[RMDB]
RNA sequence: GGGAACGACUCGAGUAGAGUCGAAAAGAAUUCGUAUCAUUUGAUUUAACUGAUCGUUUUGUCUUGGCGAAAGAACAUCGUAGUGCUCACUCGGAAUGGUCAUCUAAAAAUGAAAUUCAUGCUGAACUAAAUGCAAUUUUGUUUGCUGCACGAAAUGAAGAAAGAAAGAGUUCGCUCUUUCUUUCUUAAAAGAAACAACAACAACAAC
Reactivity to DMS in 0.01 (KOAc 150mM, MgCl2 10mM, bicine 150mM(pH8.5), 24C), signal-to-noise 3, nucleotides 027 to 156: g010a100a120u010u000c030g020u000a110u010c010a130u000u000u000g010a100u000u000u010a050a090c090u010g010a060u010c050g040u000u010u010u010g010u000c050u000u000g020g030c050g030a070a070a100g000a080a060c030a020u000c090g010u000a110g020u000g010c010u000c040a060c060u000c030g040g000a060a080u000g000g010u000c010a020u000c040u010a030a040a060a070a070u010g010a040a050a120u000u000c040a040u000g020c030u010g020a050a080c090u010a030a050a060u000g020c080a050a110u000u000u000u000g020u000u000u000g030c010u000g010c010a140c130g010a060a080a100u000g000
Reactivity to 2A3 in 0.01 (KOAc 150mM, MgCl2 10mM, bicine 150mM(pH8.5), 24C), signal-to-noise 3, nucleotides 027 to 156: g070a010a040u090u080c030g010u110a060u100c040a060u030u120u190g100a090u090u160u130a080a090c070u060g020a040u020c030g020u010u020u060u110g060u030c020u040u050g040g000c030g040a100a000a030g030a070a040c020a020u080c030g040u050a050g040u010g050c000u020c020a030c000u020c010g010g050a060a040u040g080g010u040c010a000u010c010u120a120a100a020a000a000u080g030a060a020a030u110u070c020a030u110g010c020u020g010a040a040c020u040a120a030a040u050g030c010a020a040u030u030u020u070g040u020u030u060g050c050u050g010c020a000c100g100a060a010a060u280g030